[RMDB]
RNA sequence: GGGAACGACUCGAGUAGAGUCGAAAACUUGGGCACUUCGGUGCCCAAGAAACGCUCAACCUCAGAGCGCAAAAGUCGUACGAAUACAGUUCGACAUGAGGAAAACGGACCCGUUCGCGGGUCCGAACAAAUUUACUCUCUUCGGAGAGUAAAUUUGAAAAGAAACAACAACAACAAC
Reactivity to 2A3 in 0.01 (KOAc 150mM, MgCl2 10mM, bicine 150mM(pH8.5), 24C), signal-to-noise 1, nucleotides 027 to 126: c000u010u010g000g020g000c000a020c000u030u030c180g090g030u000g000c000c000c010a000a000g010a000a000a000c000g010c010u010c020a130a090c010c010u000c010a000g000a010g000c020g000c070a300a220a000a000g000u010c000g020u030a010c010g030a100a050u240a200c170a100g010u030u050c000g000a000c000a000u010g000a020g050g040a000a060a020a000c010g000g000a000c040c000c000g000u050u040c210g000c020g070g000g000u000c000c000g000a010a000
Reactivity to DMS in 0.01 (KOAc 150mM, MgCl2 10mM, bicine 150mM(pH8.5), 24C), signal-to-noise 2, nucleotides 027 to 126: c020u000u000g000g000g040c000a010c000u000u020c120g040g030u000g020c000c000c000a020a000g000a100a110a250c000g000c000u000c000a070a110c020c000u000c000a000g000a000g000c010g010c110a050a080a000a000g020u000c000g010u010a010c020g000a190a110u020a130c170a110g010u000u010c000g010a020c000a010u000g010a020g000g000a090a030a110a200c000g000g000a000c000c000c020g020u000u010c190g000c000g020g000g020u000c000c000g000a010a060